[RMDB]
RNA sequence: GGGAACGACUCGAGUAGAGUCGAAAAGAGGCUUCUAGCUUCGAAACACCAUCGAUCGUCCAUUCUUCUUUACCUCCUUCUGGCUCUUCCGAUGAGACGCGACCGGUGGCAUCACCUCUCGGUUCGUCCGACCUGCCUUUUUGUCUAUCUGAGCCUCGUUGAAUGUUUAGUUCGCUAAACAUUCAACAAAAGAAACAACAACAACAAC
Reactivity to DMS in 0.01 (KOAc 150mM, MgCl2 10mM, bicine 150mM(pH8.5), 24C), signal-to-noise 1, nucleotides 027 to 156: g040a020g020g040c020u000u000c190u010a090g000c010u000u000c020g020a160a090a120c180a110c030c010a090u000c000g030a060u020c020g010u000c010c020a130u000u010c110u010u000c020u000u000u000a100c030c000u000c030c030u000u000c050u010g000g030c030u000c020u000u000c060c030g080a140u000g000a140g030a040c060g010c050g040a070c020c000g020g040u010g030g000c100a160u010c080a220c020c020u010c020u010c020g000g010u000u000c030g050u010c000c000g000a090c060c040u010g010c000c020u010u010u000u000u000g000u020c020u000a170u000c020u000g000a130g020c050c020u000c120
Reactivity to 2A3 in 0.01 (KOAc 150mM, MgCl2 10mM, bicine 150mM(pH8.5), 24C), signal-to-noise 3, nucleotides 027 to 156: g030a010g010g020c050u170u110c130u300a080g000c000u030u020c040g010a090a120a010c090a050c020c010a040u060c040g040a050u040c020g050u030c050c030a100u090u070c040u130u010c030u070u190u140a130c020c020u080c010c000u080u100c050u090g010g000c000u010c010u160u080c070c020g060a110u100g070a050g010a060c050g010c060g040a020c000c010g000g020u020g010g000c030a100u110c030a050c010c000u000c020u070c020g020g000u050u030c010g030u000c010c010g050a070c000c020u090g050c030c000u060u100u050u120u110g050u000c020u020a140u020c040u050g020a010g010c020c010u030c050